[RMDB]
RNA sequence: GGGAACGACUCGAGUAGAGUCGAAAAGAUCUGUUGCAGUGUCGUCUGGCAGGUGACAGGUUGAAGCCCUGGGCUGUGUGUUGAAGUACUUGCACGAUGAGUACGCGGCACCAGAUGAUCAGGCAUGCGGUGAAUCAUCGUUCGCGAUGGUUUACCGAAAAGAAACAACAACAACAAC
Reactivity to 2A3 in 0.01 (KOAc 150mM, MgCl2 10mM, bicine 150mM(pH8.5), 24C), signal-to-noise 9, nucleotides 027 to 126: g020a010u000c000u000g000u000u010g000c020a200g110u000g010u040c090g150u180c230u300g010g000c000a010g020g000u000g000a000c000a000g010g000u020u040g030a030a010g020c000c000c000u010g010g020g000c000u000g030u000g000u000g010u120u010g030a200a030g000u000a000c000u000u010g030c060a050c200g150a230u120g000a000g000u000a000c000g000c010g010g000c000a000c000c000a000g000a050u100g030a060u080c000a000g000g000c020a020u110g030
Reactivity to DMS in 0.01 (KOAc 150mM, MgCl2 10mM, bicine 150mM(pH8.5), 24C), signal-to-noise 9, nucleotides 027 to 126: g000a020u000c000u000g010u000u000g000c010a040g020u010g030u000c010g020u040c210u060g010g010c000a020g000g020u000g000a010c000a010g000g010u000u000g000a040a060g010c100c000c000u000g000g000g010c010u000g000u050g010u000g010u000u000g000a060a180g010u000a000c000u000u000g000c090a180c250g000a170u010g000a010g000u000a010c000g010c010g000g000c010a010c000c010a010g000a070u020g000a080u020c010a020g000g000c040a160u040g010